Chemical mapping of a 170-nucleotide RNA with DMS and 2A3. 2A3 is a SHAPE reagent: it acylates the 2'-hydroxyl of flexible nucleotides of all four kinds. The reactions ran in a buffer of 150 mM KOAc, 10 mM MgCl2 and 150 mM bicine (pH 8.5), at 24 C. The 2A3 profile rests on 5,026 reads. The data come from the RNA Mapping Database (RMDB), library 15KLIB. For 2A3 the reverse transcriptase was SuperScript II with manganese. For DMS the reverse transcriptase was MarathonRT.
RNA sequence: GGGAACGACUCGAGUAGAGUCGAAAAUCCAGAGGACCCCUUCAGCGAACAGAAGAGACUCCCCUCGAUAGGAGCAAGACCAUAGCGAUGGGGGGAGAUGCUAGGAGUCGGAGGAGACCGAAGCGAGAGAGUCGACCGUUCGCGGUCGACAAAAGAAACAACAACAACAAC
Reactivity to DMS in 0.01 (KOAc 150mM, MgCl2 10mM, bicine 150mM(pH8.5), 24C), signal-to-noise 4, nucleotides 027 to 129: u030c040c030a090g040a160g040g000a060c000c000c000c000u000u060c090a140g060c040g010a090a010c140a050g010a090a090g020a020g040a230c030u060c020c050c080c020u020c040g040a130u000a020g010g010a150g020c160a080a110g060a100c100c030a040u070a100g050c090g030a150u060g000g000g000g000g000g000a000g020a050u040g010c100u020a130g000g000a070g040u040c040g010g000a070g030g000a160g000a110c020c060g020a070a130g000c100g010a090g030a090g010a090
Reactivity to 2A3 in 0.01 (KOAc 150mM, MgCl2 10mM, bicine 150mM(pH8.5), 24C), signal-to-noise 4, nucleotides 027 to 129: u010c010c000a000g020a030g060g010a080c020c040c000c050u060u040c050a040g010c000g050a030a020c020a150g070a100a000g050a050g030a030c040u040c050c020c000c010u000c020g050a030u140a140g050g030a050g050c050a070a040g120a110c050c000a120u150a050g000c000g030a060u120g020g000g010g020g030g000a000g000a020u150g010c020u040a070g000g000a010g040u040c040g000g000a000g010g000a070g000a010c000c020g020a020a020g000c010g010a020g010a000g010a000